RNA sequence: GGGAACGACUCGAGUAGAGUCGAAAAAAAAAAGAUAUGGAGCCAUGCGCCUCGACGAUCGUCCGUAACAUCUAGUCGGAAACGACUAGUGGGACGGGAGAGGUGACAUGGCUCCUAAGUCAAAAAAGUACUAAUAUCUGUUCGCAGAUAUUAGUACAAAAGAAACAACAACAACAAC
Reactivity to DMS in 0.01 (KOAc 150mM, MgCl2 10mM, bicine 150mM(pH8.5), 24C), signal-to-noise 3, nucleotides 027 to 126: a000a040a030a070a080a120g010a030u000a300u000g000g000a010g060c010c000a010u000g000c040g000c000c000u000c000g010a090c260g000a020u010c010g020u000c000c010g010u000a030a080c150a010u000c000u000a000g000u010c000g010g000a080a030a130c000g010a010c000u000a000g020u000g010g000g000a010c000g010g000g000a040g000a030g000g030u000g010a050c010a000u000g000g010c000u000c000c000u000a020a050g010u010c020a010a070a090a120a070a140